An RNA of 207 nucleotides, treated with DMS and 2A3 and read out base by base. It was measured as part of the RMDB library M2RFPK. 2A3 adducts were read by reverse transcription with SuperScript II with manganese. The DMS profile rests on 2,064 reads. Conditions: 150 mM KOAc, 10 mM MgCl2 and 150 mM bicine (pH 8.5), 24 C. For DMS the reverse transcriptase was MarathonRT.
RNA sequence: GGGAACGACUCGAGUAGAGUCGAAAAGGGAAUGGUGGUUUACCCCGUUAUCAAAUGAUUACCAACCAAUAAUUGGCGAAACUCGUUUCGCGUUGGCUGCCUAAUUCAAGGAAUUAGCGUGCCUUCAAAGACAUCAAGAAGUUCGCUUCUUGAUGAACUUAGAGCUUUGGUUCGCCAAAGCUCUAAGAAAAGAAACAACAACAACAAC
Reactivity to DMS in 0.01 (KOAc 150mM, MgCl2 10mM, bicine 150mM(pH8.5), 24C), signal-to-noise 1, nucleotides 027 to 156: g020g000g000a060a080u000g000g010u000g000g000u010u000u000a120c030c030c000c030g000u000u000a110u020c190a090a050a070u010g000a200u000u000a050c000c020a050a090c030c010a090a070u010a050a120u010u010g000g020c000g000a130a040a080c050u000c100g060u000u010u000c010g030c110g000u010u010g000g020c040u000g000c120c000u000a000a020u000u000c010a130a090g030g000a000a010u030u000a060g000c060g010u010g000c010c000u020u000c030a070a090a070g010a220c010a000u000c000a000a020g000a050a060g040u000u010c300g020c000u000u000c000u010u000g000a000u000g020a050a080
Reactivity to 2A3 in 0.01 (KOAc 150mM, MgCl2 10mM, bicine 150mM(pH8.5), 24C), signal-to-noise 2, nucleotides 027 to 156: g050g010g020a100a070u080g000g010u030g030g000u040u030u150a100c010c000c000c010g110u120u140a100u130c080a050a040a130u160g010a010u070u040a000c000c000a060a090c060c020a050a050u140a150a080u060u160g110g000c010g020a020a000a030c060u060c110g100u020u000u000c000g000c000g020u040u030g000g000c020u040g040c080c030u010a010a000u010u020c090a160a120g220g000a120a000u000u010a020g040c080g040u030g010c010c000u020u000c030a050a040a030g050a010c030a000u000c000a010a000g000a010a000g000u020u080c110g010c100u000u020c000u000u010g000a000u000g000a000a020